[RMDB]
RNA sequence: GGGAACGACUCGAGUAGAGUCGAAAACGCAGAGGGUUCUGAUAACAAAGAACCUAGAUAGCCUCAUCGGUAUUAUAGGAUGUAGUCGGUGAGCCGGAAUGCCUGCAUCGUAAGCCUAUAAGUAAAUUUAAGUGUAAUCACUUCGGUGAUUACACAACCCGUUUAGAUAGUUCGCUAUCUAAACGGGAAAAGAAACAACAACAACAAC
Reactivity to DMS in 0.01 (KOAc 150mM, MgCl2 10mM, bicine 150mM(pH8.5), 24C), signal-to-noise 1, nucleotides 027 to 156: c050g060c040a150g000a230g000g060g040u000u010c000u000g000a200u000a120a160c300a040a190a010g000a020a040c010c000u000a030g000a160u010a100g000c030c010u000c020a050u000c020g030g020u000a080u000u000a100u000a070g000g000a090u000g030u010a080g000u000c000g000g040u000g010a020g020c000c020g010g020a040a120u020g010c030c000u010g000c040a050u000c060g000u000a040a140g010c010c010u000a000u010a030a090g000u000a040a100a120u010u000u000a040a160g030u000g000u000a000a000u000c000a000c000u000u010c300g090g000u000g000a030u000u010a000c000a000c000a010a060
Reactivity to 2A3 in 0.01 (KOAc 150mM, MgCl2 10mM, bicine 150mM(pH8.5), 24C), signal-to-noise 3, nucleotides 027 to 156: c060g010c030a030g080a070g060g030g020u020u000c010u000g070a100u100a230a050c030a020a080a000g010a000a000c000c000u000a010g010a120u130a020g000c000c000u000c000a040u060c040g060g000u050a050u100u020a050u100a030g080g020a070u060g040u090a040g070u100c010g000g010u020g020a000g000c000c050g060g060a120a010u050g030c030c010u030g040c010a020u040c020g040u040a000a080g040c000c000u070a070u020a090a090g080u100a060a080a150u160u210u130a160a030g000u000g000u000a000a000u000c010a010c010u040u060c170g040g000u010g000a000u000u000a000c000a000c000a000a010
Chemical mapping of a 207-nucleotide RNA with DMS and 2A3. DMS adducts were read by reverse transcription with MarathonRT. Values are in units of 0.01, from 0 to 300, in steps of 10. It was measured as part of the RMDB library M2RFPK. Values cover nucleotides 27 to 156.